Overview
Chemical mapping of a 207-nucleotide RNA with 2A3 and DMS. It was measured as part of the RMDB library M2RFPK. For DMS the reverse transcriptase was MarathonRT.
RNA sequence: GGGAACGACUCGAGUAGAGUCGAAAAAUACUCCAGCAGUAGGACUCAGCGACCGUCACAACAAGGUUGUGCUGGUAUCCGACGGUCGUAUAGCCCUGUCUUGCAGGUUGCCUUGCACUGACGUGCCACACCAUUUACAGAUUCGUCUGUAAAUGAACAAAGGUCAUAACUUCGGUUAUGACCUUUGAAAAGAAACAACAACAACAAC
Reactivity to 2A3 in 0.01 (KOAc 150mM, MgCl2 10mM, bicine 150mM(pH8.5), 24C), signal-to-noise 3, nucleotides 027 to 156: a000u120a040c050u000c010c000a000g000c000a000g000u130a010g020g020a020c020u030c040a010g010c000g000a000c020c000g030u010c040a060c050a210a140c080a210a130g070g000u030u020g020u070g020c030u040g030g000u030a050u010c020c040g000a000c010g000g000u010c000g000u040a070u060a040g000c000c000c010u020g030u030c040u010u070g030c010a030g020g050u130u130g050c020c000u020u060g000c000a070c110u080g050a030c080g040u060g040c040c030a070c010a030c050c010a010u000u000u000a000c000a000g030a020u010u120c160g050u000c070u010g000u000a000a000a000u010g010a030a000
Reactivity to DMS in 0.01 (KOAc 150mM, MgCl2 10mM, bicine 150mM(pH8.5), 24C), signal-to-noise 3, nucleotides 027 to 156: a110u010a090c070u020c020c030a120g040c030a070g000u010a030g000g010a050c010u010c130a250g020c000g010a040c010c000g000u000c020a240c080a110a090c100a070a110g000g010u000u000g020u000g030c030u000g020g010u000a060u010c090c030g000a060c000g010g020u000c020g030u010a040u000a040g020c000c010c010u000g020u000c040u000u000g010c040a120g010g010u000u020g010c020c100u000u000g000c020a070c060u000g030a120c130g000u000g000c030c050a120c050a120c100c000a010u000u000u000a000c010a030g000a060u000u010c300g010u000c000u010g010u000a000a010a010u000g020a050a150